[RMDB]
RNA sequence: GGGAACGACUCGAGUAGAGUCGAAAAGGAGAAAGGUAGAACAAAGUAGUGACCCUGUGUCAUCAGUGCUGGGGAGAGCGCUCAGCGCUCAGCACUCAGCACUCAGCGCUCAGCGCUCAACACUCAACUAAAUGCCGCAUUUCGAUGCGGCAUUUAGAAAAGAAACAACAACAACAAC
Reactivity to 2A3 in 0.01 (KOAc 150mM, MgCl2 10mM, bicine 150mM(pH8.5), 24C), signal-to-noise 1, nucleotides 027 to 126: g100g000a040g020a050a070a020g060g000u100a020g070a160a030c020a060a270a020g050u160a060g000u050g070a070c000c000c030u080g030u090g040u160c040a080u050c010a100g030u000g010c000u000g000g000g010g010a090g000a000g000c020g060c090u130c260a080g050c000g000c000u010c020a000g000c010a040c030u000c010a010g020c000a000c000u000c000a000g010c020g040c010u120c190a020g000c020g010c010u000c020a010a030c030a000c060u060c050a020a020
Reactivity to DMS in 0.01 (KOAc 150mM, MgCl2 10mM, bicine 150mM(pH8.5), 24C), signal-to-noise 2, nucleotides 027 to 126: g000g000a040g000a090a090a020g020g030u000a030g020a090a080c090a070a060a060g000u010a060g020u010g000a180c090c020c090u010g030u000g010u000c080a070u010c130a050g010u000g040c000u000g010g000g010g000a180g000a010g010c000g000c000u000c170a060g050c000g010c010u000c030a050g010c110a210c030u000c030a030g000c010a010c000u000c190a050g000c070g000c010u000c160a080g010c040g000c030u000c120a060a020c130a060c060u010c110a010a120
The record gives the reactivity of an RNA of 177 nucleotides to 2A3 and DMS. For 2A3 the reverse transcriptase was SuperScript II with manganese. The RNA was probed in 150 mM KOAc, 10 mM MgCl2 and 150 mM bicine (pH 8.5) at 24 C. Values are in units of 0.01, from 0 to 300, in steps of 10.